Annotation: An RNA of 177 nucleotides, treated with 2A3 and DMS and read out base by base. Source: RMDB library RFM100, as collected in RNAgym. For 2A3 the reverse transcriptase was SuperScript II with manganese. Values are in units of 0.01, from 0 to 300, in steps of 10. The 2A3 profile rests on 839 reads.

[RMDB]
RNA sequence: GGGAACGACUCGAGUAGAGUCGAAAAACGCGUUGCCGGAGUGUGGCCAGAUGAUGACGUUAGAUUCAUCGGUAAAGCGGCGGCCGUGUUGAUCAAUCCACAGAUAUGGCUGACGCGCGGCGGCUAGCUACUGGUGCGUCUUCGGACGCACCAGUAGAAAAGAAACAACAACAACAAC
Reactivity to 2A3 in 0.01 (KOAc 150mM, MgCl2 10mM, bicine 150mM(pH8.5), 24C), signal-to-noise 2, nucleotides 027 to 126: a000c080g050c020g030u040u060g000c000c020g010g070a050g070u060g000u060g040g000c010c030a050g050a000u060g000a000u050g050a020c080g100u200u180a020g030a240u030u000c010a010u000c040g040g000u090a130a100a040g050c000g060g040c010g020g000c000c000g040u040g030u040u130g010a110u000c010a050a020u060c020c060a100c000a070g050a050u130a030u170g000g060c040u020g000a040c000g010c000g000c000g010g000c000g050g010c000u000a040g010
Reactivity to DMS in 0.01 (KOAc 150mM, MgCl2 10mM, bicine 150mM(pH8.5), 24C), signal-to-noise 2, nucleotides 027 to 126: a150c060g040c090g000u030u000g000c010c060g000g010a190g030u000g080u030g000g000c000c000a090g000a100u000g000a050u000g020a090c140g000u020u040a050g000a150u000u020c010a000u030c040g030g000u030a010a110a080g000c040g000g020c000g000g000c030c020g010u020g000u000u000g010a080u060c060a070a070u000c010c050a110c160a170g040a040u000a190u010g000g000c300u010g000a030c070g000c050g000c040g010g000c020g050g000c030u000a060g050